[RMDB]
RNA sequence: GGGAACGACUCGAGUAGAGUCGAAAACUCUUCCUCGGUCUUGUUCUGAAUGCACACAUGUCUAGGGGCUAAGGAUGUCCUACAGGUACCCGCACGUAACCUUCAGAGAGUGUGGAUCUGAGUAGGAGAUUACCCUGAUAUUCGUAUCAGGGUAAUCAAAAGAAACAACAACAACAAC
Reactivity to DMS in 0.01 (KOAc 150mM, MgCl2 10mM, bicine 150mM(pH8.5), 24C), signal-to-noise 9, nucleotides 027 to 126: c010u000c010u010u000c300c010u000c010g010g010u000c030u030u020g020u000u010c020u010g010a100a060u000g010c060a060c080a060c100a060u010g010u000c050u010a080g000g010g000g000c080u020a070a090g010g000a070u010g010u000c010c010u010a020c020a300g000g000u000a060c090c000c010g000c010a020c010g000u030a020a020c020c010u000u010c300a080g000a300g000a030g000u000g020u010g000g000a030u000c000u010g010a110g010u000a010g020g010a080
Reactivity to 2A3 in 0.01 (KOAc 150mM, MgCl2 10mM, bicine 150mM(pH8.5), 24C), signal-to-noise 9, nucleotides 027 to 126: c000u010c000u050u040c030c010u000c010g020g010u020c040u090u240g030u050u020c010u020g100a090a050u180g020c040a020c010a000c010a110u100g030u060c040u070a060g020g030g040g000c030u040a060a040g080g030a080u110g050u040c000c000u010a010c000a010g010g010u040a070c000c010c000g010c000a000c020g220u080a020a020c010c000u030u030c010a000g010a000g000a010g020u010g000u010g010g000a010u010c010u020g030a030g080u020a010g000g020a040
Structure probing data (DMS and 2A3) for a 177-nucleotide construct. For DMS the reverse transcriptase was MarathonRT. Conditions: 150 mM KOAc, 10 mM MgCl2 and 150 mM bicine (pH 8.5), 24 C. Values are in units of 0.01, from 0 to 300, in steps of 10.